[RMDB]
RNA sequence: GGGAACGACUCGAGUAGAGUCGAAAAGAUAUGGAACGGUAGAUGAGCAACAGCUACACUCGGAAACGAGUGUAGACAUGCUCGCUAUUCGUUCCUAAGUCAAAAGCCCGUCGUUCGCGACGGGCAAGGUUAGAGUGUAGUUCGCUACACUCUAACCAAAAGAAACAACAACAACAAC
Reactivity to DMS in 0.01 (KOAc 150mM, MgCl2 10mM, bicine 150mM(pH8.5), 24C), signal-to-noise 4, nucleotides 027 to 126: g000a070u000a300u000g000g000a010a000c000g000g000u000a000g000a070u000g020a000g020c000a040a110c300a160g010c010u000a000c000a000c010u000c000g000g010a090a050a210c010g000a000g000u000g000u010a000g010a040c090a180u000g000c000u000c000g000c000u000a000u010u010c010g010u000u000c000c000u010a020a110g010u010c030a070a140a110a190g010c000c000c000g020u000c000g010u000u010c240g020c010g010a020c010g000g000g010c020a000a000
Reactivity to 2A3 in 0.01 (KOAc 150mM, MgCl2 10mM, bicine 150mM(pH8.5), 24C), signal-to-noise 3, nucleotides 027 to 126: g010a010u060a030u140g000g010a000a010c010g000g000u020a010g070a300u160g000a030g000c010a010a130c050a240g040c000u000a000c000a000c000u000c020g020g000a060a060a020c010g000a000g010u000g010u000a000g000a010c010a010u040g000c000u000c000g000c000u010a020u150u210c010g000u000u000c010c000u010a010a020g010u020c020a030a070a130a140g000c010c000c000g000u000c000g030u020u090c300g000c030g180a000c000g020g000g040c010a010a000